[RMDB]
The record gives the reactivity of an RNA of 207 nucleotides to 2A3.
2A3 adducts were read by reverse transcription with SuperScript II with manganese.
For 2A3, 669 sequencing reads were counted.
The RNA was probed in 150 mM KOAc, 10 mM MgCl2 and 150 mM bicine (pH 8.5) at 24 C.

RNA sequence: GGGAACGACUCGAGUAGAGUCGAAAAUCUUGGCUUUGACUGACUCCAGCCAUGGGUGCAUGUGGGCCUAGAAUGUCUCUCAGAAGGCCUUAGGCCAGAGAUCUGCAGAAAAUAGCUCAGUACGUAUGUACCUGAAUCUGGGACUGGCCAUGGGAGCCGUCGAUCGUGGGUUCGCCCACGAUCGACGAAAAGAAACAACAACAACAAC
Reactivity to 2A3 in 0.01 (KOAc 150mM, MgCl2 10mM, bicine 150mM(pH8.5), 24C), signal-to-noise 1, nucleotides 027 to 156: u060c030u000u020g000g000c030u120u030u070g030a040c010u060g000a000c020u010c020c020a010g040c030c000a030u030g000g010g070u080g010c010a030u080g010u050g020g000g040c010c000u030a030g030a040a090u150g030u050c010u000c010u020c050a060g040a230a040g020g000c010c040u120u160a080g000g060c050c000a000g000a010g000a070u020c050u030g060c020a030g110a000a140a050a080u110a070g010c030u040c060a010g040u030a000c030g120u180a040u250g020u030a020c000c030u040g020a030a100u000c010u010g000g000g160a060c010u030g020g000c000c070a000u000g020g000g000a000g010c010